Background:
Source: RMDB library OK1LIB, as collected in RNAgym. The record gives the reactivity of an RNA of 177 nucleotides to 2A3 and DMS. For 2A3, 670 sequencing reads were counted. Conditions: 150 mM KOAc, 10 mM MgCl2 and 150 mM bicine (pH 8.5), 24 C.

RNA sequence: GGGAACGACUCGAGUAGAGUCGAAAACAAUAGUUCCUCAUUUUAGUUAAGGCAUCGGAACUCCAGCCGAACAUCCUCAGGCAACUUCACUUUGGAGAGGAAUGACUUUAGAUCAAACAAUGCUACAUGCCGGAUGAUAAUUCGUUAUCAUCCGGCAAAAAGAAACAACAACAACAAC
Reactivity to 2A3 in 0.01 (KOAc 150mM, MgCl2 10mM, bicine 150mM(pH8.5), 24C), signal-to-noise 2, nucleotides 027 to 126: c090a000a090u300a100g000u070u060c040c000u030c000a080u100u210u090u080a230g040u100u060a170a040g030g020c100a020u160c040g000g000a000a000c080u000c000c030a080g010c000c000g000a000a040c080a020u160c080c010u040c010a040g090g000c020a030a040c000u030u040c000a080c230u180u180u250g050g060a020g000a000g010g000a280a240u070g010a000c010u040u040u100a010g100a030u090c020a000a080a080c000a040a120u180g170c000u020a010c000a180
Reactivity to DMS in 0.01 (KOAc 150mM, MgCl2 10mM, bicine 150mM(pH8.5), 24C), signal-to-noise 1, nucleotides 027 to 126: c140a000a060u010a140g030u020u000c000c000u000c060a010u000u000u000u020a150g000u020u000a030a170g100g030c000a040u000c040g020g010a210a110c030u000c110c060a050g030c010c000g010a070a070c300a010u010c010c010u000c130a020g030g000c050a000a050c080u000u000c120a060c090u000u000u050g000g010a160g000a000g000g000a020a050u000g000a000c060u000u000u000a050g000a080u030c060a110a000a080c150a050a040u000g000c130u020a110c110a170